[RMDB]
Chemical mapping of a 177-nucleotide RNA with 2A3 and DMS. DMS adducts were read by reverse transcription with MarathonRT.
RNA sequence: GGGAACGACUCGAGUAGAGUCGAAAAGCACAAGGAUACAGUCAGAAGGAUGGCAUAGACUUUGACCAAGUUUUUGCACCAGUCACCCGGCAAGCUACACUUCGUCUGUUCCUCACUAUCGCCGCCAGCCCGGAUAAAUAUUCGUAUUUAUCCGGGCAAAAGAAACAACAACAACAAC
Reactivity to 2A3 in 0.01 (KOAc 150mM, MgCl2 10mM, bicine 150mM(pH8.5), 24C), signal-to-noise 1, nucleotides 027 to 126: g060c030a000c070a120a020g070g020a050u050a160c020a010g050u050c040a070g030a070a020g070g050a120u070g070g000c030a020u020a030g040a010c020u000u030u130g080a080c050c020a000a040g020u000u000u040u120u100g020c030a050c010c010a020g070u070c010a060c040c000c040g000g000c020a050a030g010c000u050a010c060a000c100u030u030c010g080u010c030u040g010u020u040c000c000u040c010a040c020u120a100u150c060g030c060c030g140c080c000a000
Reactivity to DMS in 0.01 (KOAc 150mM, MgCl2 10mM, bicine 150mM(pH8.5), 24C), signal-to-noise 2, nucleotides 027 to 126: g000c060a070c150a220a030g000g010a040u020a000c080a090g010u030c040a080g040a070a040g010g040a110u020g010g010c030a110u020a090g000a010c000u000u000u010g010a100c240c080a070a060g000u000u000u020u020u000g000c050a080c070c040a060g050u010c050a070c100c010c050g010g000c090a060a070g000c050u010a040c230a120c030u000u000c080g000u010c050u020g000u000u030c000c010u020c110a050c080u010a030u000c040g050c040c070g010c070c050a080